[RMDB]
RNA sequence: GGGAACGACUCGAGUAGAGUCGAAAAUUUGUGUUACUUUCCAGCCCCUUCUCCCCCCCUUUCAUCCUCCAAGAACCAUUGUAAAACUCGCAGUGACAAAGAGAGUGGGUAGGGUUUGAGGCCCCUGUUAUACGGAUAACUUCGGUUAUCCGUAUAAAAAAGAAACAACAACAACAAC
Reactivity to 2A3 in 0.01 (KOAc 150mM, MgCl2 10mM, bicine 150mM(pH8.5), 24C), signal-to-noise 4, nucleotides 027 to 126: u080u060u060g070u020g030u050u040a040c020u020u020u010c030c010a010g000c040c010c010c010u060u020c010u040c000c000c010c000c000c000c000u010u030u060c050a070u030c000c010u050c020c010a030a050g020a050a030c030c010a060u030u090g030u130a030a060a080a100c020u030c040g020c020a040g020u020g060a010c030a040a100a010g080a010g010a020g030u060g000g010g020u060a070g030g010g020u030u040u080g060a070g010g000c000c000c000c000u030g020
Reactivity to DMS in 0.01 (KOAc 150mM, MgCl2 10mM, bicine 150mM(pH8.5), 24C), signal-to-noise 6, nucleotides 027 to 126: u020u010u020g010u000g000u010u010a060c070u010u010u000c020c020a160g000c030c020c010c030u010u000c030u000c010c010c010c010c010c010c020u010u030u010c050a080u010c040c020u020c010c050a060a160g000a080a080c060c030a070u030u010g000u010a050a070a080a100c060u010c040g020c040a070g010u020g010a090c100a060a080a080g000a090g010a070g020u010g000g000g000u020a040g000g010g010u010u000u000g010a190g000g010c040c000c000c030u010g020